[RMDB]
RNA sequence: GGGAACGACUCGAGUAGAGUCGAAAAGUGCAGCAGUGUGGAGACCUGUUGUAAUACCUUCGUCACAUAUGCGGGCGUCGGUGAGCUGCGCAGUUAGCGGAUGCUGUGCGCGGCAGAGUCGGAGAUACGAAUCACAUGACUUCGGUCAUGUGAUUCGAAAAGAAACAACAACAACAAC
Reactivity to 2A3 in 0.01 (KOAc 150mM, MgCl2 10mM, bicine 150mM(pH8.5), 24C), signal-to-noise 1, nucleotides 027 to 126: g040u000g000c020a000g030c000a010g000u000g000u070g260g080a050g020a020c000c000u000g000u030u060g010u050a010a050u120a040c010c000u000u040c000g010u000c010a010c010a100u300a090u250g060c250g000g030g000c000g000u030c020g000g050u040g040a040g020c000u010g000c020g000c090a020g070u040u080a010g010c030g120g190a190u300g030c020u050g010u000g020c000g000c000g020g000c040a000g010a000g010u010c040g000g050a050g000a020u120a070